This 177-nucleotide RNA was probed chemically with 2A3 and DMS. For DMS the reverse transcriptase was MarathonRT. 2A3 adducts were read by reverse transcription with SuperScript II with manganese.

[RMDB]
RNA sequence: GGGAACGACUCGAGUAGAGUCGAAAAGAAAGAAAGAAAGAUGCAGGGUGAACAGACUGAUCUUGUUUCUGCGGAAAUGUUAGUUACAGUCAUUUCGGCGAUGAGAUCAGCCUGUCGAACCCAGCAAAAUGUGCUAAAAGUUCGCUUUUAGCACAUUAAAAGAAACAACAACAACAAC
Reactivity to 2A3 in 0.01 (KOAc 150mM, MgCl2 10mM, bicine 150mM(pH8.5), 24C), signal-to-noise 9, nucleotides 027 to 126: g110a020a050a010g130a040a080a010g110a050a090a020g120a030u080g010c020a040g020g000g010u020g020a030a000c000a000g000a010c000u000g000a010u000c010u020u030g060u050u100u050c130u220g010c010g030g020a000a000a000u030g020u090u110a150g060u140u180a140c110a100g080u050c000a060u000u000u000c010g190g000c000g000a000u010g000a010g000a000u000c000a000g000c010c000u010g000u000c000g000a000a010c000c000c000a000g000c000a000a020
Reactivity to DMS in 0.01 (KOAc 150mM, MgCl2 10mM, bicine 150mM(pH8.5), 24C), signal-to-noise 8, nucleotides 027 to 126: g020a100a110a100g000a100a090a080g000a130a090a110g010a110u010g010c010a080g010g000g030u000g010a180a030c020a000g000a040c000u000g000a000u000c000u000u010g010u010u010u020c090u030g030c020g010g000a010a000a000u000g010u010u010a110g010u030u040a130c280a140g000u020c000a010u000u000u000c000g020g040c010g000a030u000g000a010g000a010u000c000a010g010c030c000u000g010u000c070g010a150a060c000c000c000a040g040c010a030a050